[RMDB]
RNA sequence: GGGAACGACUCGAGUAGAGUCGAAAAAGUGGCUAGUUCGCUAGCCACUAAAGACCGCACGGCAGCGGAAAUAAGCCGAAACGCAAACAGAAGGGACUGAAAGACUCCAAACAUUCGUGUUUGGAAAUACUGAUAAGUUCUUCGGAACUUAUCAGUAAAAAGAAACAACAACAACAAC
Reactivity to 2A3 in 0.01 (KOAc 150mM, MgCl2 10mM, bicine 150mM(pH8.5), 24C), signal-to-noise 1, nucleotides 027 to 126: a000g010u020g000g000c010u010a010g020u010u060c070g020c060u010a000g000c010c000a000c000u000a000a000a000g020a060c010c010g000c060a080c010g030g000c010a050g020c080g040g120a150a200a070u210a070a000g000c010c000g020a050a050a000c060g000c030a070a090a090c000a030g030a040a030g060g000g020a010c010u070g020a040a060a040g010a010c010u000c000c000a000a010a000c000a000u080u150c190g080u030g000u070u010u000g000g000a000a010a000
Reactivity to DMS in 0.01 (KOAc 150mM, MgCl2 10mM, bicine 150mM(pH8.5), 24C), signal-to-noise 4, nucleotides 027 to 126: a030g030u000g010g010c010u000a000g020u000u020c200g040c020u000a000g020c010c000a000c000u000a020a090a130g010a260c030c000g010c070a110c050g000g000c030a140g010c040g000g000a040a070a060u010a110a130g010c020c010g010a070a100a090c160g020c080a070a090a070c100a060g000a070a070g000g010g010a070c080u000g000a060a060a120g000a090c140u000c000c000a000a000a020c010a040u000u010c140g020u000g000u000u000u000g000g000a020a080a080
An RNA of 177 nucleotides, treated with 2A3 and DMS and read out base by base. Reactivities are given for positions 27 through 126. For DMS the reverse transcriptase was MarathonRT. The 2A3 profile rests on 1,776 reads.